[RMDB]
An RNA of 177 nucleotides, treated with DMS and 2A3 and read out base by base. Conditions: 150 mM KOAc, 10 mM MgCl2 and 150 mM bicine (pH 8.5), 24 C. 2A3 is a SHAPE reagent: it acylates the 2'-hydroxyl of flexible nucleotides of all four kinds.
RNA sequence: GGGAACGACUCGAGUAGAGUCGAAAAGGUGGAAUUCUUCCCAGCUCCGACGGAAUGGCGCUCGUGGUUAGUUCGGCCGUCUUGUAUCACGCGAGCGUUUGUAUACCCGUGCGACUCAAGGCGGCGGAGACUGCCUUGGAUUCGUCCAAGGCAGUCUAAAAGAAACAACAACAACAAC
Reactivity to DMS in 0.01 (KOAc 150mM, MgCl2 10mM, bicine 150mM(pH8.5), 24C), signal-to-noise 4, nucleotides 027 to 126: g020g020u020g000g010a090a090u020u020c070u000u000c010c010c010a170g000c060u000c040c020g010a060c050g010g000a130a060u020g000g020c030g000c030u000c010g010u000g020g010u000u010a090g000u000u000c050g020g000c010c000g010u000c010u000u000g000u000a100u000c080a060c030g000c000g000a030g010c070g000u000u000u010g020u010a080u040a070c070c010c010g010u000g010c070g010a070c080u000c030a020a010g010g010c010g010g000c000g010g000
Reactivity to 2A3 in 0.01 (KOAc 150mM, MgCl2 10mM, bicine 150mM(pH8.5), 24C), signal-to-noise 4, nucleotides 027 to 126: g110g030u080g040g080a090a120u100u020c010u030u050c010c000c000a020g000c020u030c040c040g040a010c010g030g050a180a130u170g060g030c020g020c000u030c030g030u090g040g070u060u080a150g020u110u060c070g080g000c000c000g000u000c000u000u000g030u030a080u100c050a020c090g010c000g010a040g040c050g030u010u010u100g060u040a110u070a050c000c000c000g030u030g040c050g040a030c030u010c040a000a000g000g000c000g010g010c000g020g000
DMS adducts were read by reverse transcription with MarathonRT.